This 207-nucleotide RNA was probed chemically with 2A3.
RNA sequence: GGGAACGACUCGAGUAGAGUCGAAAAGAAAGAAAGAAAGAAAGGUAUGAAGUCCUAUUCACACACGAUAGGAUAAACUUCAUAUUGAUCGUGUAUGUGCUAACGCACAUACACGAAUGCGCAUGCAGAACUGCAUGCAUGAACAUAGUGUGUGCAACGACUGGUCAUGAUUCGUCAUGACCAGUCGAAAAGAAACAACAACAACAAC
Reactivity to 2A3 in 0.01 (KOAc 150mM, MgCl2 10mM, bicine 150mM(pH8.5), 24C), signal-to-noise 2, nucleotides 027 to 156: g040a000a050a020g050a030a050a030g090a010a040a030g080a020a100a000g030g020u020a010u000g000a010a000g000u000c000c000u010a000u000u000c060a000c000a010c000a000c010g000a000u000a000g000g020a020u050a050a090a010c010u000u000c000a000u010a000u020u040g000a020u040c000g000u000g000u000a000u000g000u000g000c030u150a190a040c130g000c010a000c000a000u000a020c000a000c000g010a020a000u020g000c010g000c000a000u000g000c000a020g050a300a110c200u050g000c000a020u020g000c010a010u110g050a090a000c080a100u140a070g000u010g000u010g000u040g020c000a080a090
Record summary:
The RNA was probed in 150 mM KOAc, 10 mM MgCl2 and 150 mM bicine (pH 8.5) at 24 C. The 2A3 profile rests on 1,236 reads.